[RMDB]
RNA sequence: GGGAACGACUCGAGUAGAGUCGAAAAGAUAUGGAUUCGAAGUAAGACAACAGCACCUUUCGGAAACGAAAGGUGACAUGUCUACUUUCGAAUCCUAAGUCAAAAGCUGGUGCUUCGGCACCAGCAAGCUUAUGAACAACUUCGGUUGUUCAUAAGCAAAAGAAACAACAACAACAAC
Reactivity to 2A3 in 0.01 (KOAc 150mM, MgCl2 10mM, bicine 150mM(pH8.5), 24C), signal-to-noise 3, nucleotides 027 to 126: g060a010u110a060u200g010g000a010u000u010c000g010a010a000g000u030a300a140g010a010c020a120a030c040a180g050c000a000c010c000u000u010u020c020g040g020a120a060a040c000g010a010a010a010g000g000u000g010a010c000a000u010g000u000c000u010a000c000u190u260u070c000g000a000a010u000c010c000u010a050a000g040u020c030a000a040a100a140g000c000u010g000g010u000g000c000u050u120c300g140g000c020a000c050c020a000g000c010a000a000
Reactivity to DMS in 0.01 (KOAc 150mM, MgCl2 10mM, bicine 150mM(pH8.5), 24C), signal-to-noise 3, nucleotides 027 to 126: g000a060u000a300u010g000g000a000u000u000c010g000a040a020g010u000a050a110g000a000c000a010a120c300a180g000c020a010c000c000u020u000u010c010g030g000a110a090a250c000g020a000a000a020g010g000u010g000a020c050a190u010g000u000c000u010a010c010u000u010u010c010g020a020a000u000c010c010u010a020a100g010u010c060a120a130a120a180g010c010u000g000g030u000g000c000u000u010c220g000g000c000a010c000c000a000g020c000a020a040

This 177-nucleotide RNA was probed chemically with 2A3 and DMS. For 2A3, 7,660 sequencing reads were counted. The DMS profile rests on 3,027 reads. Conditions: 150 mM KOAc, 10 mM MgCl2 and 150 mM bicine (pH 8.5), 24 C. It was measured as part of the RMDB library TTRDES.